Structure probing data (2A3 and DMS) for a 177-nucleotide construct. The 2A3 profile rests on 8,105 reads. For DMS the reverse transcriptase was MarathonRT. For DMS, 15,496 sequencing reads were counted. Values cover nucleotides 27 to 126. Conditions: 150 mM KOAc, 10 mM MgCl2 and 150 mM bicine (pH 8.5), 24 C.
RNA sequence: GGGAACGACUCGAGUAGAGUCGAAAAAUUUUGAAGCAGGUCAAAACUACAAGGAAGUUGAUGACCCUUCUGUAGUGAUUAAGUUUGCUUUACACGGGGAUUCUGCGUCUUUAUUGGUAUGGACCACCAUGUAGUUCGUAUUCGUACGAACUACAUGAAAAGAAACAACAACAACAAC
Reactivity to 2A3 in 0.01 (KOAc 150mM, MgCl2 10mM, bicine 150mM(pH8.5), 24C), signal-to-noise 6, nucleotides 027 to 126: a000u100u110u050u110g020a020a010g020c100a040g000g030u050c010a020a040a060a070c010u020a030c020a050a050g070g030a060a020g050u080u090g090a150u110g040a050c020c000c000u060u030c030u040g010u010a010g000u000g040a030u060u070a060a170g300u030u040u030g000c000u070u080u080a030c050a020c050g030g000g000g000a030u060u030c010u060g030c010g020u000c000u030u130u070a180u100u100g040g000u080a090u120g060g010a010c010c000a010c000
Reactivity to DMS in 0.01 (KOAc 150mM, MgCl2 10mM, bicine 150mM(pH8.5), 24C), signal-to-noise 9, nucleotides 027 to 126: a090u010u000u010u010g010a060a070g010c070a090g010g010u000c020a070a110a120a030c010u000a040c130a060a060g010g010a050a030g020u010u000g000a100u010g010a300c080c040c010u000u000c090u000g010u000a020g010u000g000a030u000u000a070a130g000u000u010u000g000c010u000u000u000a040c110a060c200g010g000g000g010a210u000u000c030u000g000c050g010u000c020u000u000u000a080u020u000g010g010u000a060u000g010g000a090c020c030a090c170